[RMDB]
RNA sequence: GGGAACGACUCGAGUAGAGUCGAAAAACUAGGAGCGCACAUCUGUCUAAGACUGUACGACAGUCUGUCUCUCUAGCACGCUUGUUCAACGAGAGAGAGAGAGCGUUGGAACAAGUGUGCAACGAAAUGGGGAAUUACUAUUCGUAGUAAUUCCCCAAAAAGAAACAACAACAACAAC
Reactivity to DMS in 0.01 (KOAc 150mM, MgCl2 10mM, bicine 150mM(pH8.5), 24C), signal-to-noise 5, nucleotides 027 to 126: a090c070u000a070g000g000a080g000c240g010c050a030c050a050u010c040u000g000u000c050u000a120a110g000a050c090u010g010u000a070c130g010a210c260a020g000u000c060u000g000u010c010u000c010u000c030u010a220g000c010a020c000g020c010u000u000g010u000u000c010a020a010c010g000a060g000a130g000a110g010a070g000a060g010a080g010c020g010u000u000g010g000a000a000c000a010a020g020u000g000u000g000c000a020a030c190g010a040a070a100
Reactivity to 2A3 in 0.01 (KOAc 150mM, MgCl2 10mM, bicine 150mM(pH8.5), 24C), signal-to-noise 3, nucleotides 027 to 126: a010c070u080a020g010g030a040g010c050g040c060a000c020a120u060c030u060g050u030c010u030a040a070g050a150c040u050g090u170a040c080g020a020c050a000g000u030c010u030g030u010c040u000c000u000c030u040a030g000c000a000c010g010c000u010u010g010u000u000c000a000a020c000g010a000g000a020g000a000g020a000g010a000g010a170g050c040g010u010u020g160g010a010a020c000a000a010g010u000g000u000g000c000a010a010c090g040a010a040a090